Structure probing data (2A3 and DMS) for a 177-nucleotide construct. It was measured as part of the RMDB library OK2TRN. For 2A3, 2,277 sequencing reads were counted. For DMS, 3,117 sequencing reads were counted. 2A3 adducts were read by reverse transcription with SuperScript II with manganese. Conditions: 150 mM KOAc, 10 mM MgCl2 and 150 mM bicine (pH 8.5), 24 C.
RNA sequence: GGGAACGACUCGAGUAGAGUCGAAAAGACGUUCUGCAUCGCGGCCAUCGUGUAAUAGCGCGUGCCGCCCGCCGCACGAUACCGGUGCAGGCCCGCGCGCGGCGCCGCGCCCUGCGCGGUCAGCACACUAAUCACUACCCUUCGGGGUAGUGAUUAGAAAAGAAACAACAACAACAAC
Reactivity to 2A3 in 0.01 (KOAc 150mM, MgCl2 10mM, bicine 150mM(pH8.5), 24C), signal-to-noise 2, nucleotides 027 to 126: g020a010c040g030u100u040c030u010g040c030a030u030c070g040c110g070g030c120c040a050u050c070g020u010g000u060a190a300u070a300g090c080g000c020g100u040g060c010c030g000c000c000c000g020c010c040g020c000a010c000g020a020u070a060c040c000g020g000u020g000c020a020g020g000c000c000c000g000c000g010c000g010c070g000g040c010g000c100c140g240c080g030c040c000c000u020g000c000g000c010g000g000u040c050a010g090c010a010c000a020
Reactivity to DMS in 0.01 (KOAc 150mM, MgCl2 10mM, bicine 150mM(pH8.5), 24C), signal-to-noise 3, nucleotides 027 to 126: g010a120c150g020u000u010c020u000g000c010a050u000c040g000c120g040g040c130c110a060u000c030g000u000g010u000a130a120u010a140g010c080g030c060g020u000g020c020c020g000c060c090c010g000c000c060g000c030a030c040g010a050u000a080c100c010g000g000u000g020c000a030g000g010c070c020c030g020c010g000c020g000c300g000g000c060g000c110c070g010c070g010c000c050c040u000g000c020g010c020g000g000u000c060a060g000c090a080c110a230